[RMDB]
Source information:
Structure probing data (DMS and 2A3) for a 177-nucleotide construct. For DMS the reverse transcriptase was MarathonRT. Conditions: 150 mM KOAc, 10 mM MgCl2 and 150 mM bicine (pH 8.5), 24 C. The 2A3 profile rests on 1,612 reads. Source: RMDB library OK1LIB, as collected in RNAgym. The DMS profile rests on 3,727 reads.
RNA sequence: GGGAACGACUCGAGUAGAGUCGAAAAGCAAUUGUUUACGCCGAGUCCGAAGCACUUGCACUUAAUCUUAUUAAAGAAACAAUAAAGUUCGAUGGUUGUGUUAUCGAAUGGGCUGUUUCCUCGUCGGCAUGCAAGCCGAAUUCGUUCGGCUUGCAUGAAAAGAAACAACAACAACAAC
Reactivity to DMS in 0.01 (KOAc 150mM, MgCl2 10mM, bicine 150mM(pH8.5), 24C), signal-to-noise 3, nucleotides 027 to 126: g010c040a090a040u020u010g010u000u000u020a060c140g020c000c000g000a050g000u030c040c070g000a060a110g010c040a040c080u000u020g000c040a130c130u000u020a120a080u030c070u030u010a060u060u040a060a040a100g010a050a040a040c090a030a070u050a060a070a210g020u010u010c000g020a020u020g010g030u010u010g070u040g020u020u040a010u000c000g000a050a030u000g000g000g000c080u000g010u010u000u010c020c010u000c070g000u020c020g000g000
Reactivity to 2A3 in 0.01 (KOAc 150mM, MgCl2 10mM, bicine 150mM(pH8.5), 24C), signal-to-noise 4, nucleotides 027 to 126: g060c030a010a050u080u020g030u000u060u080a090c030g000c010c060g020a010g020u010c020c020g010a040a010g000c020a020c050u040u090g010c020a030c080u050u120a080a090u020c010u030u170a150u130u230a130a170a020g090a020a090a000c050a050a100u160a180a130a000g030u020u030c000g050a040u020g120g050u090u060g020u070g000u070u030a070u020c010g000a010a010u050g000g080g000c060u010g010u030u040u020c000c000u000c030g100u040c030g020g030